[RMDB]
RNA sequence: GGGAACGACUCGAGUAGAGUCGAAAACGUAGAAACUGCUUUAGAAAUCGCUCAAAAUUUAAGUUUUAUGAAUAAGACGCUGGGUUUAAUGGCGCAAAUGCAAAGCUAUGCAUUCAAACAACAAAUGUCCUUUUACAUGAUUCGUCAUGUAAAAGGAAAAAGAAACAACAACAACAAC
Reactivity to DMS in 0.01 (KOAc 150mM, MgCl2 10mM, bicine 150mM(pH8.5), 24C), signal-to-noise 3, nucleotides 027 to 126: c060g010u010a070g000a120a060a080c120u000g020c040u010u000u050a140g020a070a120a100u000c080g000c040u000c070a070a050a040a040u010u000u000a080a150g000u000u000u010u010a080u030g000a080a090u010a060a060g010a070c160g020c130u000g010g000g010u000u000u010a040a080u010g000g010c030g000c160a050a050a040u000g000c060a020a040a060g000c040u010a060u010g010c050a070u000u010c080a050a060a090c100a030a040c130a030a100a100u010g000
Reactivity to 2A3 in 0.01 (KOAc 150mM, MgCl2 10mM, bicine 150mM(pH8.5), 24C), signal-to-noise 2, nucleotides 027 to 126: c040g050u020a020g130a050a100a020c060u020g010c020u070u090u060a030g040a030a090a020u140c030g000c040u040c060a130a130a070a150u100u130u110a130a020g000u040u000u000u090a110u060g030a080a040u050a080a010g010a010c030g000c090u020g040g040g070u050u060u050a070a060u080g010g000c010g000c000a010a070a000u060g020c040a050a000a030g040c040u070a020u120g010c010a040u050u080c020a030a080a070c040a030a010c020a030a090a260u130g060